RNA sequence: GGGAACGACUCGAGUAGAGUCGAAAACGGAGGAGCGCGUCCCGUGGUUGCCAUGGAGACCGCCGGACUGCGGAGGCCACAAACUGUGCGAAGGGGGAGGCGAGGGGCGGGGCCGCGGGAGGCCCGGGCCUGAUGUAGAUUUCGAUCUACAUCAGGCAAAAGAAACAACAACAACAAC
Reactivity to 2A3 in 0.01 (KOAc 150mM, MgCl2 10mM, bicine 150mM(pH8.5), 24C), signal-to-noise 2, nucleotides 027 to 126: c040g030g040a070g050g050a110g100c050g020c040g060u010c000c000c040g020u000g000g000u090u090g070c080c070a130u120g050g040a110g040a080c020c000g040c020c020g020g060a040c040u120g000c010g030g050a030g020g040c040c010a010c030a030a240a090c080u120g030u110g090c040g090a050a120g000g000g010g000g000a110g000g020c030g040a080g000g020g000g050c040g010g010g010g010c030c020g020c040g000g040g010a050g000g050c000c020c000g000g080
Reactivity to DMS in 0.01 (KOAc 150mM, MgCl2 10mM, bicine 150mM(pH8.5), 24C), signal-to-noise 2, nucleotides 027 to 126: c110g010g000a130g020g020a100g010c070g030c070g020u000c010c010c100g020u010g010g010u000u010g010c070c050a090u000g010g010a170g010a040c020c010g010c020c120g000g000a060c090u010g040c030g000g000a140g010g000c060c010a060c100a060a080a120c190u010g000u010g010c060g020a130a060g000g000g000g010g020a150g000g000c120g000a060g000g000g000g000c100g000g020g000g020c020c020g010c060g010g000g000a120g000g010c020c020c030g010g010
Record summary:
The record gives the reactivity of an RNA of 177 nucleotides to 2A3 and DMS. The data come from the RNA Mapping Database (RMDB), library OK2TRN. The 2A3 profile rests on 2,548 reads. For 2A3 the reverse transcriptase was SuperScript II with manganese.